[RMDB]
Structure probing data (DMS and 2A3) for a 177-nucleotide construct. It was measured as part of the RMDB library OK2TRN. Conditions: 150 mM KOAc, 10 mM MgCl2 and 150 mM bicine (pH 8.5), 24 C. For DMS, 3,370 sequencing reads were counted.

RNA sequence: GGGAACGACUCGAGUAGAGUCGAAAAUAGUAACAUACAUGACACAUAAGCAUGUUACUACUCUAUGUUACUACCUUCAUAGUGGGUGGUAACUUAGGGGUGGUAACUUAGAGGGUUCAUUUAUUGCCACUUCCAUGCAAUUCGUUGCAUGGAAGUGAAAAGAAACAACAACAACAAC
Reactivity to DMS in 0.01 (KOAc 150mM, MgCl2 10mM, bicine 150mM(pH8.5), 24C), signal-to-noise 3, nucleotides 027 to 126: u000a070g000u010a060a070c100a050u000a040c070a040u000g000a070c150a060c100a070u000a110a100g020c120a040u010g000u000u000a010c000u010a060c000u000c000u000a070u010g000u000u000a000c000u000a010c000c000u000u010c210a180u010a130g030u010g020g000g040u010g010g010u000a010a010c000u000u000a040g020g000g000g020u000g010g000u000a010a030c010u000u010a040g000a100g000g010g000u000u000c040a040u000u000u000a070u030u000g000c150
Reactivity to 2A3 in 0.01 (KOAc 150mM, MgCl2 10mM, bicine 150mM(pH8.5), 24C), signal-to-noise 4, nucleotides 027 to 126: u120a010g070u020a070a000c020a030u090a030c030a020u050g040a030c020a000c010a130u190a110a020g080c040a040u110g000u010u010a000c000u020a030c000u000c000u010a050u060g010u000u010a010c010u010a000c010c000u070u170c110a210u150a210g120u190g010g020g020u020g010g000u030a010a010c000u000u050a070g050g030g000g020u020g000g000u020a010a000c000u020u030a050g030a080g110g020g010u050u040c030a040u060u070u120a110u060u150g060c020